[RMDB]
RNA sequence: GGGAACGACUCGAGUAGAGUCGAAAAGAUAUGGAUCCAUGGAGGCCGUAGCAUCGUUGAAAGCGAUAGAUUCUCGGAAACGAGAAUCUAUCGCUGGAGAUGUCACGGUGAAGUGGAUCCUAAGUCACGAUCAUAACCAGUUCGCUGGUUAUGAUCGAAAAGAAACAACAACAACAAC
Reactivity to DMS in 0.01 (KOAc 150mM, MgCl2 10mM, bicine 150mM(pH8.5), 24C), signal-to-noise 1, nucleotides 027 to 126: g010a100u010a300u100g000g010a010u000c000c010a020u000g010g070a300g000g030c000c000g000u040a070g030c020a060u010c020g000u020u030g000a110a240a020g000c000g000a080u000a020g000a060u000u020c000u040c020g060g000a090a110a200c000g000a010g000a060a000u020c000u000a000u000c010g000c000u000g000g000a050g020a030u000g090u000c020a000c010g000g050u000g000a240a270g010u000g000g020a010u000c000c010u000a020a050g000u000c050a250